[RMDB]
RNA sequence: GGGAACGACUCGAGUAGAGUCGAAAACGGAUUGAAUCGCUAUAAACCAAGAUACAAAACUUCACUUAUUUACUAUUUGAUUGAUGAUAUAUGCAAGUUCAUCGUCAUAGAUACUUAGCAACUUGUCAGGCAAGGCAAAUUUUAUUAGAGGAUUGAAGCUAAUUAGCGCAUUCGUGCGCUAAUUAGCAAAAGAAACAACAACAACAAC
Reactivity to 2A3 in 0.01 (KOAc 150mM, MgCl2 10mM, bicine 150mM(pH8.5), 24C), signal-to-noise 2, nucleotides 027 to 156: c030g000g050a010u120u170g060a090a060u060c090g000c050u090a080u130a300a040a010c070c010a060a010g040a080u110a060c080a090a140a150a060c020u150u130c100a040c050u080u020a070u280u230u110a050c030u060a090u100u060u030g040a020u130u110g000a000u030g000a000u040a040u050a000u200g060c060a050a070g080u000u020c000a030u000c010g080u020c040a000u070a030g030a000u050a100c040u040u100a050g000c000a010a180c030u030u020g000u030c000a000g000g130c000a010a010g070g010c000a000a020a030u030u100u000u000a090u080u070a050g040a000g010g040a000u060u030g020a090a010
Annotation: An RNA of 207 nucleotides, treated with 2A3 and read out base by base. High 2A3 reactivity points to a flexible backbone, as in loops and unpaired stretches. The RNA was probed in 150 mM KOAc, 10 mM MgCl2 and 150 mM bicine (pH 8.5) at 24 C. 2A3 adducts were read by reverse transcription with SuperScript II with manganese.